RNA sequence: GGGAACGACUCGAGUAGAGUCGAAAAUCGUUCGAGUGAGUGAUCGUGAGAUCACGUACACGAACGUUCGUGUGUGAGAUCACGAGAACUCUCGAUCGUUCGUACGAGAGAACGAGAGAACGAUCACGAGAACACGUGUUCUCUCGAGUACACGUACCAACACAAACGGGUUCGCCCGUUUGUGUUGAAAAGAAACAACAACAACAAC
Reactivity to 2A3 in 0.01 (KOAc 150mM, MgCl2 10mM, bicine 150mM(pH8.5), 24C), signal-to-noise 3, nucleotides 027 to 156: u090c010g000u010u000c000g000a030g050u130g030a040g010u000g010a030u010c000g000u020g010a020g000a040u030c020a000c010g060u090a020c000a000c000g070a170a130c170g040u120u060c000g010u010g000u010g000u010g000a020g000a040u000c000a000c000g000a010g010a020a000c030u000c000u000c010g000a020u000c010g000u040u070c030g000u030a010c020g000a020g000a020g030a240a020c010g020a010g000a000g010a030a000c030g030a090u140c050a020c090g140a130g060a160a030c100a010c090g050u070g000u030u000c000u000c000u000c000g000a010g020u070a010c070a000c030g010u000a000c040
Reactivity to DMS in 0.01 (KOAc 150mM, MgCl2 10mM, bicine 150mM(pH8.5), 24C), signal-to-noise 1, nucleotides 027 to 156: u000c010g010u000u000c030g000a080g020u000g010a050g000u010g040a060u030c000g050u010g000a110g050a130u000c000a000c040g300u000a030c010a050c000g000a000a090c280g010u000u010c000g100u010g000u020g000u000g020a130g000a290u010c020a010c000g020a080g010a180a110c010u010c030u000c000g020a060u000c030g010u010u000c040g040u000a130c060g000a150g010a160g000a050a270c060g010a120g010a100g000a060a020c000g000a050u000c060a090c050g040a180g060a100a060c090a110c070g000u010g020u000u000c000u000c060u010c050g000a220g040u010a100c040a070c030g020u000a100c030
Conditions: 150 mM KOAc, 10 mM MgCl2 and 150 mM bicine (pH 8.5), 24 C. An RNA of 207 nucleotides, treated with 2A3 and DMS and read out base by base. DMS adducts were read by reverse transcription with MarathonRT. For 2A3, 3,079 sequencing reads were counted.